[RMDB]
This 177-nucleotide RNA was probed chemically with DMS. Source: RMDB library OK2TST, as collected in RNAgym. Conditions: 150 mM KOAc, 10 mM MgCl2 and 150 mM bicine (pH 8.5), 24 C. High DMS reactivity at an A or C suggests that its Watson-Crick edge is free.
RNA sequence: GGGAACGACUCGAGUAGAGUCGAAAAAGGGACAGUGGCUCACACUUAUAAUGCCAGAACUUUAGGAGUCCACAGCGCGAGGACUGCUUGAGGCCAGGAGUUUAAGACCAGACUGGGCAACGUAAUGAGAAACGAACACAUUCGUGUGUUCGUUUCUAAAAGAAACAACAACAACAAC
Reactivity to DMS in 0.01 (KOAc 150mM, MgCl2 10mM, bicine 150mM(pH8.5), 24C), signal-to-noise 1, nucleotides 027 to 126: a050g020g010g010a100c060a110g000u000g010g020c040u020c100a160c100a110c010u000u000a080u000a030a100u000g000c020c040a020g000a060a110c050u000u000u000a010g000g010a040g020u000c010c030a090c140a120g000c080g000c070g020a100g000g000a010c020u000g010c040u000u000g000a010g000g020c090c010a170g000g000a050g020u000u010u020a030a100g000a080c050c040a110g000a100c090u000g000g010g010c060a020a040c040g000u000a050a030u010g000